[RMDB]
Chemical mapping of a 207-nucleotide RNA with 2A3 and DMS.
The DMS profile rests on 1,887 reads.
Values cover nucleotides 27 to 156.
RNA sequence: GGGAACGACUCGAGUAGAGUCGAAAACAAUGGGAUACCUAGUGCUAAGGACCUAUGUCUUAGAUUGCAACAUGUUCUCAACAAGCUGCACCAAGUAAAUUUUGAACCAGAGCUGGAAUGGACUCACCGACCUGAGCCCCUAGGAAUCUGGAUUUCACGAUAUGCUUCUGUUCGCAGAAGCAUAUCGAAAAGAAACAACAACAACAAC
Reactivity to 2A3 in 0.01 (KOAc 150mM, MgCl2 10mM, bicine 150mM(pH8.5), 24C), signal-to-noise 3, nucleotides 027 to 156: c020a020a090u130g020g000g030a040u180a200c000c020u020a040g040u050g090c060u050a030a030g020g010a070c010c050u060a070u090g010u000c060u020u040a110g010a160u110u170g060c030a030a020c010a090u120g020u070u020c040u050c020a020a070c010a060a020g020c040u050g030c060a050c030c020a040a040g060u070a100a110a260u130u140u070u100g040a010a040c010c000a010g010a000g030c030u060g000g030a100a100u150g040g040a120c010u000c010a040c030c080g100a070c020c010u020g000a010g000c010c000c040c000u020a030g000g050a040a030u000c020u020g010g020a050u030u040u040c040a030
Reactivity to DMS in 0.01 (KOAc 150mM, MgCl2 10mM, bicine 150mM(pH8.5), 24C), signal-to-noise 1, nucleotides 027 to 156: c060a130a140u020g020g020g010a140u000a010c020c010u020a060g010u010g060c040u000a050a090g050g010a110c000c100u010a090u000g040u000c060u010u010a080g010a140u020u000g020c000a060a060c090a120u010g010u000u010c090u000c090a080a090c060a060a100g040c000u000g020c060a020c070c040a050a100g020u000a030a020a210u000u000u000u020g000a050a140c000c010a040g010a100g050c050u010g010g010a110a140u000g040g040a030c030u000c000a010c030c000g060a230c060c010u010g020a060g000c010c000c040c060u000a100g020g000a100a080u000c030u000g000g000a170u010u000u010c000a100